Structure probing data (DMS and 2A3) for a 177-nucleotide construct.
Source: RMDB library M2PK50, as collected in RNAgym.
[RMDB]
RNA sequence: GGGAACGACUCGAGUAGAGUCGAAAAGGCGUAGCGUUCGCGCUACGCCAAAUGAGCAUGUACAAAUGGCCAAAGUACAUGCGAAAUUAAAGAGGCCAUAAAAAACCACUUAGUUCGCUAAGUGGAAGUUAUAUAGAAAGUUCGCUUUCUAUAUAACAAAAGAAACAACAACAACAAC
Reactivity to DMS in 0.01 (KOAc 150mM, MgCl2 10mM, bicine 150mM(pH8.5), 24C), signal-to-noise 3, nucleotides 027 to 126: g030g020c020g000u000a000g010c000g030u000u010c190g030c020g020c000u000a000c000g000c000c000a000a020a040u000g000a240g000c020a000u000g000u010a000c000a050a050a020u000g020g000c010c010a220a140a080g000u000a000c000a000u000g000c010g000a050a050a070u020u010a070a150a110g010a160g030g010c000c000a140u080a010a030a090a090a050a070c000c000a010c000u000u000a010g010u000u020c250g020c000u000a000a000g020u000g000g000a020a020
Reactivity to 2A3 in 0.01 (KOAc 150mM, MgCl2 10mM, bicine 150mM(pH8.5), 24C), signal-to-noise 5, nucleotides 027 to 126: g010g000c000g010u000a010g000c010g010u010u050c220g010c000g000c070u000a000c000g010c000c000a000a000a000u020g000a000g000c000a000u010g000u000a010c020a020a080a060u050g010g000c000c000a030a030a010g000u010a000c000a000u000g000c000g010a130a090a050u240u190a100a100a070g190a160g030g000c020c020a010u090a010a110a000a000a000a010c000c000a000c010u000u010a010g030u060u040c220g020c130u000a010a000g000u000g000g000a000a000
For DMS, 2,602 sequencing reads were counted. For 2A3, 11,619 sequencing reads were counted.